RNA sequence: GGGAACGACUCGAGUAGAGUCGAAAAGAUAUGGAGGGUGUCCAUGCACUUCCGUUGAUCUCGGAAACGAGGGAGGAAGUGAACUACAUGAGCACCCUCCUAAGUCACAGCCAAGUUCGCUUGGCAACGUACCUGCUAAGUUCGCUUAGCAGGUACGAAAAGAAACAACAACAACAAC
Reactivity to 2A3 in 0.01 (KOAc 150mM, MgCl2 10mM, bicine 150mM(pH8.5), 24C), signal-to-noise 1, nucleotides 027 to 126: g030a030u090a050u130g010g000a000g000g010g010u010g000u000c030c010a020u000g000c010a010c020u010u030c000c000g020u190u010g000a000u000c000u010c010g010g090a100a100a060c030g000a010g000g000g000a010g010g000a030a000g000u000g000a000a000c020u120a050c010a010u030g000a040g000c010a020c000c000c000u000c000c000u000a000a000g010u000c000a050c120a020g030c000c000a000a000g000u100u220c300g010c300u000u000g010g040c010a030a010
Reactivity to DMS in 0.01 (KOAc 150mM, MgCl2 10mM, bicine 150mM(pH8.5), 24C), signal-to-noise 2, nucleotides 027 to 126: g000a040u010a300u010g010g010a020g000g000g000u000g010u000c030c000a010u000g010c000a010c000u000u010c000c000g010u000u010g000a040u000c020u010c000g010g000a130a060a210c010g010a020g010g010g000a010g000g000a020a020g000u000g000a020a020c140u010a300c030a020u000g010a050g010c000a010c010c000c000u000c000c000u000a000a040g010u000c050a140c170a120g000c000c000a010a000g000u000u000c240g020c010u000u000g000g010c010a030a030
This 177-nucleotide RNA was probed chemically with 2A3 and DMS. For 2A3 the reverse transcriptase was SuperScript II with manganese. The reactions ran in a buffer of 150 mM KOAc, 10 mM MgCl2 and 150 mM bicine (pH 8.5), at 24 C. Source: RMDB library TTRDEL, as collected in RNAgym.